[RMDB]
The data come from the RNA Mapping Database (RMDB), library M2RFPK.
Structure probing data (2A3) for a 207-nucleotide construct.
RNA sequence: GGGAACGACUCGAGUAGAGUCGAAAAUUUAACGCUGUUUUAUUGGCGCAAAGGUUUACGGAUAAACAACUAAUAAUUAAACCUUUUAUGUGCGAAACGUGGUUGUUUAACGUACUCUUUAAUCGCUUUGGGGAUGUGUCCUUCGGGACACAUCCAAGAUUAGAGCGUGGUUCGCCACGCUCUAAUCAAAAGAAACAACAACAACAAC
Reactivity to 2A3 in 0.01 (KOAc 150mM, MgCl2 10mM, bicine 150mM(pH8.5), 24C), signal-to-noise 1, nucleotides 027 to 156: u110u120u050a040a010c040g000c090u100g040u020u010u010u090a200u070u160g000g000c010g030c010a000a060a000g030g010u010u040u000a010c000g020g020a160u050a070a040a000c000a020a000c020u020a020a040u160a150a040u270u130a090a110a100c010c020u060u130u190u100a040u200g070u120g040c120g070a160a000a000c050g010u020g010g000u020u000g010u000u000u040a000a000c010g000u000a010c000u000c000u010u030u030a120a130u080c040g020c040u030u100u160g070g060g000g000a000u010g010u000g000u000c010c000u000u060c180g040g000g000a000c010a000c000a000u000c000c000a030a000
Conditions: 150 mM KOAc, 10 mM MgCl2 and 150 mM bicine (pH 8.5), 24 C.